[RMDB]
RNA sequence: GGGAACGACUCGAGUAGAGUCGAAAAGAUGCACGGCCUUAGUGUGAUCCGAGAGGAUUACACAUUAUAACCUAGGCUGUGCUAGACUAGGUCCAUUGUGGCUUUUGCCACUUACAGUACCUCAACUUAUCAUGCAUGGAGGUACGAACCAUGCUAACGACCCUAUAUCAUUCGUGAUAUAGGGUCGAAAAGAAACAACAACAACAAC
Reactivity to 2A3 in 0.01 (KOAc 150mM, MgCl2 10mM, bicine 150mM(pH8.5), 24C), signal-to-noise 5, nucleotides 027 to 156: g050a020u140g000c000a000c010g000g000c010c010u060u110a110g000u000g000u000g000a000u000c010c010g030a030g000a020g100g010a000u000u010a000c000a000c000a010u060u140a080u060a120a030c050c040u030a020g000g000c000u010g000u000g000c000u000a010g000a020c060u040a010g030g000u000c040c020a090u020u100g000u000g000g030c020u130u080u150u300g000c000c030a010c000u030u060a070c040a050g020u090a020c000c000u050c050a050a070c040u140u210a090u220c090a050u180g040c000a010u030g030g000a050g120g070u080a040c030g000a010a000c000c000a010u020g000c000u040a060a050
Reactivity to DMS in 0.01 (KOAc 150mM, MgCl2 10mM, bicine 150mM(pH8.5), 24C), signal-to-noise 3, nucleotides 027 to 156: g030a190u000g010c000a070c030g040g030c010c010u010u000a120g040u000g040u000g000a020u000c010c000g030a300g010a300g020g020a030u010u000a010c010a010c010a070u000u000a110u000a150a110c180c140u000a020g020g030c010u000g000u030g020c020u020a030g000a090c070u000a070g000g000u000c020c050a150u000u000g010u010g010g010c000u000u010u000u000g040c000c020a050c010u000u010a060c100a150g020u000a020c000c030u000c010a110a090c090u000u000a170u000c140a150u000g000c080a100u020g010g030a060g010g030u000a030c020g000a050a080c030c020a130u000g000c030u010a130a280
An RNA of 207 nucleotides, treated with 2A3 and DMS and read out base by base.
For 2A3, 3,747 sequencing reads were counted.
2A3 adducts were read by reverse transcription with SuperScript II with manganese.